[RMDB]
The data come from the RNA Mapping Database (RMDB), library RNAMAK. An RNA of 207 nucleotides, treated with DMS and 2A3 and read out base by base.
RNA sequence: GGGAACGACUCGAGUAGAGUCGAAAACCGUAGGGCUCCUGUAGAGCUUGGAUUUAUACACGAUGUAUAUUCGAAAGAGUAUACUAAGUGUAUUGUCAGCUCUACUGGAGCCCUAAACGGAAAUCAUAAUCGUUCUCUUCGGAGAACGAUUAUGAAACGGUAGUUUAGUAUUCGUACUAAACUACCGAAAAGAAACAACAACAACAAC
Reactivity to DMS in 0.01 (KOAc 150mM, MgCl2 10mM, bicine 150mM(pH8.5), 24C), signal-to-noise 2, nucleotides 027 to 156: c010c010g010u000a050g020g020g000c000u000c000c000u000g030u000a020g010a010g020c010u000u020g040g040a040u000u000u000a000u010a010c000a040c010g010a300u030g030u000a000u000a040u000u010c000g010a280a120a270g010a040g040u000a000u000a010c010u000a120a300g010u000g050u000a010u000u010g010u000c010a120g000c010u010c000u020a020c000u010g000g000a000g050c000c000c000u000a010a010a040c020g010g020a120a080a120u000c030a000u000a030a000u000c000g000u000u000c000u000c000u000u020c300g070g020a010g000a010a020c000g010a000u000u000a000u010g000a020a100a230
Reactivity to 2A3 in 0.01 (KOAc 150mM, MgCl2 10mM, bicine 150mM(pH8.5), 24C), signal-to-noise 2, nucleotides 027 to 156: c000c010g010u020a000g010g000g050c000u000c000c010u010g010u010a000g000a000g020c000u000u130g140g000a140u300u300u100a010u010a010c000a000c000g000a050u140g010u000a000u000a000u000u000c010g030a090a070a090g000a050g000u000a000u030a010c000u020a170a060g000u000g000u000a000u000u000g000u020c000a000g000c000u000c010u000a000c010u150g000g000a010g160c000c000c000u000a000a000a000c010g040g090a000a020a170u040c000a000u020a010a000u010c000g000u000u000c000u000c000u020u040c300g080g000a000g000a000a000c000g010a000u000u000a010u000g010a000a010a000
For DMS the reverse transcriptase was MarathonRT. 2A3 is a SHAPE reagent: it acylates the 2'-hydroxyl of flexible nucleotides of all four kinds. The reactions ran in a buffer of 150 mM KOAc, 10 mM MgCl2 and 150 mM bicine (pH 8.5), at 24 C.